[RMDB]
RNA sequence: GGGAACGACUCGAGUAGAGUCGAAAAGAUUCAAGGAAAAGUACGACAAAGAAGAUCGCACCCGCGAGAUUGCCGAGAUAUCGACGAAACAGCUGAACAAGGACUCGCAGCGCCUCGUCGUGCAGACCCCUGAAACUGAUUUCGAUCAGUUUCAGGGAAAAGAAACAACAACAACAAC
Reactivity to DMS in 0.01 (KOAc 150mM, MgCl2 10mM, bicine 150mM(pH8.5), 24C), signal-to-noise 3, nucleotides 027 to 126: g010a130u010u000c070a150a110g000g000a060a070a060a100g010u000a000c030g010a020c070a040a140a140g000a080a100g020a140u000c000g010c050a060c090c070c100g000c080g010a060g000a180u000u000g000c050c010g050a120g000a100u010a060u020c040g000a000c040g000a090a150a070c150a110g010c010u000g010a110a040c040a070a120g020g000a070c110u030c050g000c000a070g000c030g000c110c050u000c150g010u000c020g040u000g020c080a030g020a210c140
Reactivity to 2A3 in 0.01 (KOAc 150mM, MgCl2 10mM, bicine 150mM(pH8.5), 24C), signal-to-noise 5, nucleotides 027 to 126: g110a110u130u100c130a040a120g040g060a070a120a020a020g020u030a020c040g010a020c090a030a210a000g080a050a060g030a120u050c030g010c050a060c030c050c010g010c010g010a030g020a110u070u210g050c020c010g050a030g050a070u090a070u140c030g030a080c010g040a190a110a020c030a020g120c080u060g020a020a010c020a130a040g050g020a040c020u000c030g000c000a010g020c000g010c010c020u000c020g040u000c000g000u020g040c000a020g040a140c000
This 177-nucleotide RNA was probed chemically with DMS and 2A3. For DMS, 3,188 sequencing reads were counted. Source: RMDB library OK1LIB, as collected in RNAgym. Conditions: 150 mM KOAc, 10 mM MgCl2 and 150 mM bicine (pH 8.5), 24 C.